Description:
The record gives the reactivity of an RNA of 207 nucleotides to 2A3.
RNA sequence: GGGAACGACUCGAGUAGAGUCGAAAAUGUUUCCCAGCCAGGGAUUGUCUUCCUCUAGUUUCUUGAUCUUCUUCUUGGCCUUCCGGAGAUCCUUCUCGAGAUCAUCCACUAACUUUCUUGCAUUGACCCACUGCUCGAGGACUCCUUCUCUUCCCGCGCUCUAGAUAAGCUUCGGCUUAUCUAGAGCAAAAGAAACAACAACAACAAC
Reactivity to 2A3 in 0.01 (KOAc 150mM, MgCl2 10mM, bicine 150mM(pH8.5), 24C), signal-to-noise 2, nucleotides 027 to 156: u140g000u030u090u030c010c020c020a020g070c040c020a040g070g010g020a070u080u110g020u070c060u100u000c020c030u060c040u020a060g050u010u140u060c070u070u110g070a090u020c020u030u000c000u080u040c000u000u130g070g020c030c000u110u050c060c100g030g010a030g000a050u000c020c040u140u090c080u040c080g100a110g010a070u050c020a070u010c040c030a040c040u080a140a070c040u100u140u130c020u080u110g070c050a100u000u080g040a080c010c020c000a080c080u010g000c020u000c020g000a010g020g070a070c010u040c010c000u040u000c020u010c000u030u000c010c010c000g000c030